The record gives the reactivity of an RNA of 207 nucleotides to DMS and 2A3. The RNA was probed in 150 mM KOAc, 10 mM MgCl2 and 150 mM bicine (pH 8.5) at 24 C. The 2A3 profile rests on 2,610 reads.
RNA sequence: GGGAACGACUCGAGUAGAGUCGAAAAUGAAAAACUUGCCUGAAGACUUCCACGAGUGAAGAUCAGGUGACAGCUGAGUGUAUGGGAUGUGCAGGUACGCAGCAAGCAGGAGCGCGGCCCACAGCCCCACCUGGACCCACCACUCCCUCAUCCUGCACUAGCGUAAUUUAUUCGUAAAUUACGCUAGAAAAGAAACAACAACAACAAC
Reactivity to DMS in 0.01 (KOAc 150mM, MgCl2 10mM, bicine 150mM(pH8.5), 24C), signal-to-noise 1, nucleotides 027 to 156: u000g000a080a160a060a080a080c050u000u000g010c000c000u000g020a030a190g010a180c030u010u000c020c010a300c180g030a170g020u000g000a100a040g000a240u000c000a030g020g000u000g000a070c090a070g060c050u000g020a100g060u000g040u000a060u000g010g010g000a060u000g020u000g030c090a050g040g010u000a040c090g000c030a100g030c040a040a090g010c060a050g030g000a150g000c000g020c070g040g040c010c010c010a030c060a150g000c070c030c040c030a030c060c040u000g010g010a110c020c010c030a080c030c010a060c030u000c000c030c010u010c060a100u000c020c010u000g010c050a300
Reactivity to 2A3 in 0.01 (KOAc 150mM, MgCl2 10mM, bicine 150mM(pH8.5), 24C), signal-to-noise 4, nucleotides 027 to 156: u090g020a070a040a050a000a040c060u060u120g010c010c000u010g030a120a070g150a230c010u020u010c020c020a160c250g130a090g070u300g040a010a010g010a070u010c010a000g020g000u020g020a020c040a010g060c060u100g020a020g050u060g020u090a130u120g020g000g000a030u050g040u010g010c080a060g030g010u080a210c010g000c030a100g010c010a070a090g000c000a020g010g020a020g000c000g000c020g010g000c010c000c000a020c000a000g040c020c020c000c000a040c000c020u070g040g040a030c020c020c000a030c010c020a040c030u040c030c010c010u070c030a070u030c000c020u010g000c010a010